The record gives the reactivity of an RNA of 177 nucleotides to 2A3 and DMS. Reactivities are given for positions 27 through 126. The 2A3 profile rests on 982 reads. As a SHAPE reagent, 2A3 marks flexible, mostly unpaired nucleotides at the ribose 2'-OH. DMS adducts were read by reverse transcription with MarathonRT. It was measured as part of the RMDB library OK2TRN.
[RMDB]
RNA sequence: GGGAACGACUCGAGUAGAGUCGAAAAGGGGGACCGGAGCCAAGGCAAGCCACCAAACCCCGCUGAAGGAACACUUUAUUAUUUAUGAAGAAAGAACGUGUCGGGUUGGUACACGUGCAAAACCUGCACGUUGGGAAUCAUUCGUGAUUCCCAACGUAAAAGAAACAACAACAACAAC
Reactivity to 2A3 in 0.01 (KOAc 150mM, MgCl2 10mM, bicine 150mM(pH8.5), 24C), signal-to-noise 1, nucleotides 027 to 126: g050g000g000g010g010a060c030c040g020g020a030g000c030c010a040a020g020g010c000a040a010g040c020c020a160c010c020a140a020a160c020c000c010c020g000c070u030g080a080a040g010g020a060a040c030a010c080u030u090u050a060u140u020a130u120u250u050a150u170g000a020a070g060a120a130a010g050a020a030c010g000u000g000u060c050g000g170g000u070u050g030g030u050a000c050a010c070g010u010g000c020a000a000a060a170c010c010u010g000c000
Reactivity to DMS in 0.01 (KOAc 150mM, MgCl2 10mM, bicine 150mM(pH8.5), 24C), signal-to-noise 3, nucleotides 027 to 126: g030g000g000g020g010a130c100c100g020g000a180g000c040c110a100a090g010g000c090a130a140g000c020c050a080c010c020a030a080a230c060c010c020c050g040c100u000g020a060a080g000g010a090a060c050a100c020u000u000u000a030u010u010a150u010u000u000a060u000g000a030a060g000a090a120a150g010a080a040c040g020u010g010u010c150g000g000g030u000u010g020g030u020a070c040a040c090g030u000g010c050a080a080a090a100c060c030u000g020c060